Chemical mapping of a 177-nucleotide RNA with DMS and 2A3. The DMS profile rests on 2,664 reads. DMS adducts were read by reverse transcription with MarathonRT. The 2A3 profile rests on 1,680 reads. For 2A3 the reverse transcriptase was SuperScript II with manganese.

RNA sequence: GGGAACGACUCGAGUAGAGUCGAAAAUACCAGGUUUCUUCGGCAUUCUUCCUGGUGGUAGUAAUCGAAUGACCACAAAACUCUGUCAGGUUUCUUAGGCGUUCUUCCUGACGGCAGUAAUCGAACAUACCUAAUCAGUCUUCGGACUGAUUAGGUAAAAAGAAACAACAACAACAAC
Reactivity to DMS in 0.01 (KOAc 150mM, MgCl2 10mM, bicine 150mM(pH8.5), 24C), signal-to-noise 3, nucleotides 027 to 126: u010a120c000c000a100g000g020u000u010u010c030u000u010c070g010g010c050a040u000u000c040u000u000c020c000u000g020g020u000g010g020u000a090g010u010a130a100u030c120g000a100a080u000g000a130c040c020a080c140a070a110a140a080c030u000c000u000g000u010c000a020g020g000u000u000u000c020u000u000a090g020g040c240g010u000u000c010u010u000c000c020u000g000a020c010g000g010c110a020g010u000a050a100u010c140g000a080a080c210a150
Reactivity to 2A3 in 0.01 (KOAc 150mM, MgCl2 10mM, bicine 150mM(pH8.5), 24C), signal-to-noise 2, nucleotides 027 to 126: u080a010c000c000a010g000g010u020u080u010c020u050u050c060g000g000c010a060u050u000c010u050u030c010c000u040g100g010u050g030g000u020a040g050u030a060a120u150c070g020a060a130u120g090a170c000c010a020c040a020a150a010a010c020u020c010u030g010u020c000a010g010g040u020u070u030c040u080u120a070g070g010c010g050u030u020c000u030u000c000c000u000g020a050c030g020g000c020a000g010u050a070a140u080c090g020a060a030c030a090